[RMDB]
RNA sequence: GGGAACGACUCGAGUAGAGUCGAAAAUCUAAAUCGUAUUCUUCUAUAUUUUCCAUAUUAAAUACAAAUAUAUCUAAUGGUCUCUUUGCUGUUAGUUUUGGGUCUAAUUGUCUCAAUGAACCAGCUGAGUACGGUAAUUAUUCGUAAUUACCGUACUAAAAGAAACAACAACAACAAC
Reactivity to DMS in 0.01 (KOAc 150mM, MgCl2 10mM, bicine 150mM(pH8.5), 24C), signal-to-noise 2, nucleotides 027 to 126: u040c050u000a060a080a110u040c060g000u000a040u000u000c020u000u020c040u010a060u010a140u010u010u000u010c000c000a070u070a140u020u020a020a040a120u070a220c000a040a090a040u060a200u050a040u010c010u080a040a040u000g000g000u000c030u000c080u000u010u020g010c030u000g000u000u010a020g010u020u000u000u000g000g020g000u000c030u000a050a040u020u020g000u000c020u000c050a010a030u000g000a080a050c130c040a030g000c090u030g000
Reactivity to 2A3 in 0.01 (KOAc 150mM, MgCl2 10mM, bicine 150mM(pH8.5), 24C), signal-to-noise 6, nucleotides 027 to 126: u030c020u050a070a060a100u180c060g050u060a090u090u020c050u070u020c020u040a110u010a070u210u060u080u040c010c010a050u090a110u200u300a180a120a050u240a070c020a010a150a020u200a050u080a070u140c040u190a120a150u100g080g010u020c020u000c000u070u080u090g000c010u010g020u080u100a050g020u010u040u030u090g030g000g000u030c040u060a130a140u160u190g020u000c010u000c000a020a030u050g030a040a040c030c010a000g020c040u020g010